[RMDB]
RNA sequence: GGGAACGACUCGAGUAGAGUCGAAAAACCAGCUACAAUUUUAGCUGGUAGUGUCUACACUAAUAGCUGCCUUGUAUCGUCUGAUGGACAACCUGGCGGUGAUGCUAUUAGUUUGAGUUUUAAUAACAAACGGGCUCCUUCGGGAGCCCGAAAAGAAACAACAACAACAAC
Reactivity to 2A3 in 0.01 (KOAc 150mM, MgCl2 10mM, bicine 150mM(pH8.5), 24C), signal-to-noise 1, nucleotides 027 to 129: a000c000c000a000g000c000u040a000c000a300a300u050u050u200u160a000g000c000u000g000g000u000a000g050u000g000u000c000u050a010c000a000c000u000a000a000u000a000g000c000u040g000c000c140u000u040g000u010a190u030c020g000u010c000u040g140a220u040g150g000a000c000a010a000c000c000u050g000g000c000g000g000u000g000a000u300g070c050u000a000u020u000a040g000u000u150u000g110a000g010u000u000u000u180a120a140u000a000a000c080a190a070a000

The record gives the reactivity of an RNA of 170 nucleotides to 2A3.
2A3 adducts were read by reverse transcription with SuperScript II with manganese.
Conditions: 150 mM KOAc, 10 mM MgCl2 and 150 mM bicine (pH 8.5), 24 C.